[RMDB]
RNA sequence: GGGAACGACUCGAGUAGAGUCGAAAAUGAAAUAUGUGUCAUGGAAGGACUAUAAAGCCGUCACCAGCGGUUUGAAAAUGGUGUAUCAGGCUCCGACAGAAGAGGCGGCGCUGAUGGCGCUGGAUAAGACUGAUAUUUAGUUCGCUAAAUAUCAGUCAAAAGAAACAACAACAACAAC
Reactivity to 2A3 in 0.01 (KOAc 150mM, MgCl2 10mM, bicine 150mM(pH8.5), 24C), signal-to-noise 5, nucleotides 027 to 126: u100g030a020a060a010u300a050u140g090u000g020u050c010a030u060g060g080a090a050g090g000a010c040u040a030u090a240a120a000g020c010c010g020u040c010a020c050c000a020g030c010g040g000u050u060u120g080a060a060a020a040u110g030g010u040g010u040a080u110c030a030g040g020c010u000c020c020g050a050c050a040g150a150a030g040a100g050g020c000g000g000c020g020c030u050g050a140u090g040g010c020g000c020u020g020g040a050u050a130a020
Reactivity to DMS in 0.01 (KOAc 150mM, MgCl2 10mM, bicine 150mM(pH8.5), 24C), signal-to-noise 8, nucleotides 027 to 126: u000g000a090a090a090u010a080u010g020u010g000u000c020a070u000g010g010a130a110g020g010a070c060u000a100u000a100a100a070g000c010c010g010u000c060a190c080c090a170g000c040g000g000u000u000u000g010a060a080a090a080u010g000g010u000g020u000a060u000c060a080g010g000c010u000c030c020g010a070c090a080g010a090a100g010a110g010g010c040g000g000c060g000c020u000g000a080u000g000g020c010g010c010u000g010g010a070u010a070a100